[RMDB]
Structure probing data (DMS and 2A3) for a 177-nucleotide construct. The DMS profile rests on 819 reads. For 2A3, 572 sequencing reads were counted. DMS adducts were read by reverse transcription with MarathonRT. Conditions: 150 mM KOAc, 10 mM MgCl2 and 150 mM bicine (pH 8.5), 24 C.
RNA sequence: GGGAACGACUCGAGUAGAGUCGAAAAUUAUAGCUACCAGCCCACAGGCAUUUAGUCUACGUUGGAGGUAAACAAAUACGGGUCCUGCUUAGGAGAAAAGAAAAACGUCUUACAGCCAGUGUCUAAACUCUCAUUAUACGUUCGCGUAUAAUGAGAGAAAAGAAACAACAACAACAAC
Reactivity to DMS in 0.01 (KOAc 150mM, MgCl2 10mM, bicine 150mM(pH8.5), 24C), signal-to-noise 1, nucleotides 027 to 126: u010u030a100u000a160g010c050u000a130c030c050a140g020c000c020c040a110c130a070g030g020c050a120u030u010u000a050g010u000c010u020a060c160g030u000u000g030g010a180g030g030u000a020a030a110c050a060a100a110u010a070c080g010g030g010u000c020c020u000g000c050u000u020a030g030g000a010g010a110a050a060a090g010a060a020a040a060a080c160g020u000c050u000u000a100c070a060g020c030c040a110g010u010g010u010c110u000a070a110a150
Reactivity to 2A3 in 0.01 (KOAc 150mM, MgCl2 10mM, bicine 150mM(pH8.5), 24C), signal-to-noise 1, nucleotides 027 to 126: u090u000a060u070a250g030c000u060a080c010c010a010g050c040c000c000a050c060a000g000g060c010a010u190u120u250a070g000u010c030u030a000c010g100u070u040g030g070a070g080g020u120a040a110a060c090a020a140a030u150a050c020g030g000g090u020c000c000u000g070c040u050u030a050g040g030a030g050a060a130a020a000g070a070a190a000a020a040c040g040u050c020u000u000a010c010a000g000c080c000a040g000u030g010u080c050u120a060a060a130